[RMDB]
RNA sequence: GGGAACGACUCGAGUAGAGUCGAAAACGAGAACCAGAGCGAUUGUAGGUUAACGUCUGAGUUCCGGUUGUCGACCCCGUACUCAGAUCUCGAGAACGGUGGCUGGCCUCCCUACGCGCACGGUCGGCGGUGCCGAAGGAUUCGUCCUUCGGCACCGAAAAGAAACAACAACAACAAC
Reactivity to DMS in 0.01 (KOAc 150mM, MgCl2 10mM, bicine 150mM(pH8.5), 24C), signal-to-noise 2, nucleotides 027 to 126: c080g000a070g010a020a030c030c020a060g050a200g030c040g020a110u010u010g020u000a140g020g030u000u000a120a100c130g010u000c000u000g000a120g010u010u000c040c000g000g030u010u010g030u000c000g000a030c040c010c000c030g000u000a040c020u000c000a080g000a000u000c130u000c080g010a040g000a130a030c070g020g000u010g020g000c020u000g000g020c040c000u000c040c020c020u010a110c100g000c060g010c060a130c110g000g000u000c040g040g000
Reactivity to 2A3 in 0.01 (KOAc 150mM, MgCl2 10mM, bicine 150mM(pH8.5), 24C), signal-to-noise 2, nucleotides 027 to 126: c000g000a030g010a040a000c020c000a040g000a030g120c050g090a200u110u190g110u100a100g030g200u180u170a110a040c020g040u010c030u030g030a050g090u030u050c050c000g000g040u030u060g090u000c000g010a060c010c000c000c000g030u020a040c030u020c010a060g030a060u000c050u050c130g070a080g000a100a060c050g050g020u060g080g000c030u040g050g000c010c020u000c010c000c010u030a040c060g000c030g010c010a030c030g050g020u060c040g000g070